[RMDB]
RNA sequence: GGGAACGACUCGAGUAGAGUCGAAAAGUGUCAGCCGCGCACUCGGUCAUGAAGACGGUCAGAAUCUGCAAGCUACACUCAAUUUCUUGUUAACCAACAAGCAUAGACGCAUCCCGAGGCAGUACACUUUGUCGGCUGAUGAGGAGAGGGCGCUGCGCCUCGUUGAUUCGUUCGCGAAUCAACGAGGAAAAGAAACAACAACAACAAC
Reactivity to 2A3 in 0.01 (KOAc 150mM, MgCl2 10mM, bicine 150mM(pH8.5), 24C), signal-to-noise 2, nucleotides 027 to 156: g030u030g030u040c080a070g010c000c020g040c020g000c030a050c070u000c010g080g000u060c060a050u130g150a120a030g030a060c050g000g100u100c040a050g060a000a030u090c010u060g000c040a060a000g000c000u040a040c040a010c040u040c020a090a110u000u150u050c000u030u010g040u080u040a130a160c130c100a020a010c090a020a000g010c020a020u030a210g070a060c000g000c000a010u130c000c040c000g000a030g030g000c040a000g000u200a020c030a040c090u140u260u210g100u230c010g000g000c000u040g050a110u060g060a020g030g020a090g000a020g010g030g000c010g000c000u020g000c000g010